[RMDB]
RNA sequence: GGGAACGACUCGAGUAGAGUCGAAAAUGAUCGAGAGAUCUAACGAUGUACGCGAGUCAAAGGCACAGACUCGAGCGAAAGCUCGGUCGAAAGACCGCGUACAUCGGUCGGCAAGUGUAAAGUCAAACCAGGAUGGACCAUUCGUGGUCCAUCCUGGAAAAGAAACAACAACAACAAC
Reactivity to DMS in 0.01 (KOAc 150mM, MgCl2 10mM, bicine 150mM(pH8.5), 24C), signal-to-noise 1, nucleotides 027 to 126: u000g020a050u000c000g000a240g000a300g000a000u000c000u010a050a050c000g010a000u000g000u000a000c000g030c000g000a090g020u000c000a060a070a020g000g000c090a080c170a300g000a040c030u000c040g070a000g010c000g030a150a100a240g020c040u000c000g000g020u010c010g000a090a120a080g000a020c000c000g000c010g060u000a000c000a000u010c000g000g010u000c050g020g000c000a080a110g020u010g000u000a060a080a070g010u010c060a110a120a100
Source: RMDB library OK2TRN, as collected in RNAgym. Chemical mapping of a 177-nucleotide RNA with DMS. For DMS, 637 sequencing reads were counted. For DMS the reverse transcriptase was MarathonRT.